[RMDB]
RNA sequence: GGGAACGACUCGAGUAGAGUCGAAAAGAGCGUGUUAGGCGAGUGCGUGCGCCCACCCCUGCGCCCCUCCUCCCGCUUACACUUUGAUCUUAUUUGAUCGGAUCGUGACCCCAGCCCCGCCGGGCCGAAAUAAUAUUGGUUUCGACCAAUAUUAUUUAAAAGAAACAACAACAACAAC
Reactivity to 2A3 in 0.01 (KOAc 150mM, MgCl2 10mM, bicine 150mM(pH8.5), 24C), signal-to-noise 9, nucleotides 027 to 126: g050a010g020c060g010u070g040u160u130a050g030g030c040g020a030g040u100g040c060g030u070g020c020g020c000c000c000a050c000c010c000c000u010g000c010g010c000c010c000c000u010c000c010u020c000c010c000g020c020u050u080a040c060a020c010u080u070u150g020a030u020c020u050u190a230u260u210u160g040a040u030c010g000g020a050u040c020g020u030g090a140c010c000c000c010a010g010c000c000c000c010g060c030c020g000g010g000c010c010g020
Reactivity to DMS in 0.01 (KOAc 150mM, MgCl2 10mM, bicine 150mM(pH8.5), 24C), signal-to-noise 9, nucleotides 027 to 126: g010a090g010c080g010u010g000u010u010a080g010g010c090g010a080g010u010g010c070g020u010g010c050g010c020c030c040a160c040c010c020c050u000g010c050g000c020c020c010c020u000c030c020u000c020c020c030g010c080u000u010a080c100a060c090u000u010u010g000a040u010c010u000u020a140u010u020u020g000a030u000c020g010g000a060u010c040g010u000g010a160c030c010c010c040a140g000c050c020c010c060g010c110c070g010g010g010c030c060g010